[RMDB]
RNA sequence: GGGAACGACUCGAGUAGAGUCGAAAAUGUAAGAAACCAAAGCAAUCAUUUCUUUAUAUUCCUUAUUUUUGCCGUCAGGAAUACACAAGGCGUAUUAACUAUGAUGACUAAAAUAAAGUUAUUGAUGCGUACAUAUGGAGUUCGCUCCAUAUGUACGAAAAGAAACAACAACAACAAC
Reactivity to 2A3 in 0.01 (KOAc 150mM, MgCl2 10mM, bicine 150mM(pH8.5), 24C), signal-to-noise 4, nucleotides 027 to 126: u110g030u050a040a030g030a140a060a040c090c010a110a040a050g060c050a050a140u100c020a050u070u040u050c030u020u150u060a070u020a020u070u080c010c000u050u010a050u000u050u010u030u070g000c010c010g000u010c000a010g070g020a030a010u040a020c050a000c020a070a130g220g000c070g020u010a020u040u060a070a070c050u060a100u300g030a020u010g020a010c040u060a030a020a040a050u060a040a090a020g030u060u060a080u120u110g070a040u130g050
Reactivity to DMS in 0.01 (KOAc 150mM, MgCl2 10mM, bicine 150mM(pH8.5), 24C), signal-to-noise 3, nucleotides 027 to 126: u000g020u000a090a040g000a080a070a100c090c090a110a100a140g020c150a100a080u010c050a090u000u000u000c000u000u000u000a030u000a090u020u010c010c010u000u000a010u000u000u000u000u010g000c030c020g040u000c020a020g020g000a060a030u000a010c030a030c130a090a110g020g000c180g030u000a020u000u010a070a090c060u000a080u010g010a010u010g010a030c010u010a010a020a020a030u000a010a030a070g000u000u000a080u020u000g000a090u010g000